[RMDB]
An RNA of 207 nucleotides, treated with DMS and 2A3 and read out base by base.
RNA sequence: GGGAACGACUCGAGUAGAGUCGAAAACUCGCCUGUGUGGAAGUACGUGAGUACUUCACUCUCUACGGGAGUAGAGACACACAGAUCGUGGAGCGAUGUCUUGGAACUACUCCCGUAGUUCACGUAUGACUCACGUCAUACCAAGACGCGAGCCACGUCGUGGUAAUCAUUUCGAUGAUUACCACGAAAAAGAAACAACAACAACAAC
Reactivity to DMS in 0.01 (KOAc 150mM, MgCl2 10mM, bicine 150mM(pH8.5), 24C), signal-to-noise 1, nucleotides 027 to 156: c040u010c010g020c010c020u000g030u000g030u000g010g000a000a050g020u000a000c010g030u000g000a300g000u000a020c070u010u000c000a150c060u000c050u010c000u000a000c010g000g000g000a250g000u030a010g000a050g000a300c000a040c050a000c010a030g000a010u000c010g030u000g060g000a140g010c000g010a150u020g010u010c020u000u000g030g030a120a180c020u000a020c010u000c070c110c080g010u000a130g020u000u010c040a100c110g000u030a050u020g010a110c020u000c110a100c170g050u000c020a040u000a060c000c030a020a040g000a020c000g000c000g010a020g030c010c020a010c120g010
Reactivity to 2A3 in 0.01 (KOAc 150mM, MgCl2 10mM, bicine 150mM(pH8.5), 24C), signal-to-noise 3, nucleotides 027 to 156: c000u000c000g000c010c000u010g010u000g000u010g050g020a050a000g020u070a000c010g060u050g060a020g020u090a170c000u060u130c010a060c000u110c000u000c000u000a000c010g020g030g010a030g020u010a000g000a000g020a010c000a000c000a000c000a010g010a020u010c010g020u090g090g100a110g100c010g040a070u010g010u000c000u000u020g030g000a020a020c010u000a000c020u050c020c050c030g000u000a000g020u090u130c150a100c080g070u090a040u110g010a000c000u000c080a040c060g000u000c000a020u020a100c000c000a020a000g010a020c000g000c000g010a010g020c010c000a040c020g060

DMS adducts were read by reverse transcription with MarathonRT.
Conditions: 150 mM KOAc, 10 mM MgCl2 and 150 mM bicine (pH 8.5), 24 C.
For 2A3, 3,103 sequencing reads were counted.